[RMDB]
RNA sequence: GGGAACGACUCGAGUAGAGUCGAAAAGUAGAGUGUAAGGGCAAAAGUUGGCCUGACUGUAUUUCGAUCAGCAAGAAAUUCAGAGGCGAAAGCCGGGCCUAGCGAACCUCAGAGUCCUCCUUGAUGGCACAGCCUCUGUAUUCGUACAGAGGCUGUGAAAAGAAACAACAACAACAAC
Reactivity to 2A3 in 0.01 (KOAc 150mM, MgCl2 10mM, bicine 150mM(pH8.5), 24C), signal-to-noise 4, nucleotides 027 to 126: g070u080a020g030a070g050u120g060u100a070a050g030g030g000c060a050a050a030a060g050u080u040g080g000c010c000u030g040a060c000u010g040u020a010u010u020u000c050g040a090u110c010a040g150c040a060a140g000a000a020a000u090u110c000a000g000a060g040g000c000g030a070a000a000g000c010c010g000g000g020c000c000u020a020g010c010g050a030a030c000c010u070c060a020g000a020g090u010c000c000u040c000c000u060u110g050a130u160g080g000
Reactivity to DMS in 0.01 (KOAc 150mM, MgCl2 10mM, bicine 150mM(pH8.5), 24C), signal-to-noise 4, nucleotides 027 to 126: g010u020a080g000a030g030u010g010u000a060a090g010g010g020c030a060a060a080a130g010u010u020g000g020c010c000u000g010a090c010u000g000u000a000u000u000u000c040g000a110u030c180a160g060c150a130a140g010a020a040a000u010u000c030a020g020a190g000g010c000g010a080a060a110g010c000c000g000g000g000c040c010u000a090g000c040g000a060a070c060c000u000c030a080g010a150g000u000c010c030u010c020c030u010u010g010a120u030g000g000
The record gives the reactivity of an RNA of 177 nucleotides to 2A3 and DMS.
The data come from the RNA Mapping Database (RMDB), libraries RFM100 and RFMREP.
DMS adducts were read by reverse transcription with MarathonRT.